Source information:
An RNA of 177 nucleotides, treated with DMS and 2A3 and read out base by base. It was measured as part of the RMDB library TTRDEL. As a SHAPE reagent, 2A3 marks flexible, mostly unpaired nucleotides at the ribose 2'-OH. For 2A3, 4,659 sequencing reads were counted.

RNA sequence: GGGAACGACUCGAGUAGAGUCGAAAAGAUAUGGAGCCGUAUGGAGAUAACGAUCGGAAACGAUCGGUAUCUAUGAAGUACGGAACUACUCCUAAGUCAAAUCUGGAAGCCUUCGGGCUUCCAGAAAGAUAUUGAUGGAGUUCGCUCCAUCAAUAUCAAAAGAAACAACAACAACAAC
Reactivity to DMS in 0.01 (KOAc 150mM, MgCl2 10mM, bicine 150mM(pH8.5), 24C), signal-to-noise 2, nucleotides 027 to 126: g010a040u000a050u020g000g020a040g040c000c030g000u000a000u000g010g000a010g020a020u000a010a010c010g010a000u000c000g010g000a050a020a080c010g010a000u000c000g000g000u000a000u010c000u000a140u020g000a050a250g000u000a010c000g010g000a170a060c250u010a300c000u010c000c000u010a020a170g000u000c020a090a100a100u010c000u000g000g010a020a000g010c000c000u000u010c300g020g010g030c000u000u000c000c000a000g000a020a040a140
Reactivity to 2A3 in 0.01 (KOAc 150mM, MgCl2 10mM, bicine 150mM(pH8.5), 24C), signal-to-noise 2, nucleotides 027 to 126: g020a000u010a000u040g020g000a000g060c010c000g020u020a010u040g020g000a060g000a010u000a010a020c000g000a000u020c000g000g000a000a000a000c000g010a000u000c010g030g010u010a010u000c000u060a300u020g020a000a000g010u000a010c000g000g040a030a000c020u130a080c000u020c010c000u000a010a000g000u020c030a000a000a300u030c000u000g000g000a000a010g000c000c030u050u090c300g130g030g020c050u000u000c000c000a000g000a000a000a000